[RMDB]
RNA sequence: GGGAACGACUCGAGUAGAGUCGAAAAGCCUGGGUUUCGACCCAGGCAAAAAAACCUUUGUGCACGAAGAACACGCCUCUCCGCUUUACCCAUUGGGUAAAGACCCGGAUGCGUGGGAGUGCACUCUGGUAAAAACAUGUAAGUUCGCUUACAUGAACAACUUCUCUAAGUUCGCUUAGAGAAGUUGAAAAGAAACAACAACAACAAC
Reactivity to 2A3 in 0.01 (KOAc 150mM, MgCl2 10mM, bicine 150mM(pH8.5), 24C), signal-to-noise 2, nucleotides 027 to 156: g020c010c000u020g040g010g010u030u100u180c190g040a070c000c000c000a000g010g020c020a020a000a000a010a000a000a020c010c000u010u000u010g000u010g010c010a000c000g130a300a090g020a100a020c010a000c000g000c000c010u040c020u010c020c000g000c000u020u000u000a010c000c000c090a300u130u300g000g010g020u000a010a000a010g000a090c070c060c020g020g010a020u130g000c000g000u010g000g000g010a000g000u000g000c000a000c000u000c020u000g050g000u040a160a040a000a000a040c020a000u010g000u000a000a020g000u040u150c250g030c100u000u000a000c000a000u030g010a050a030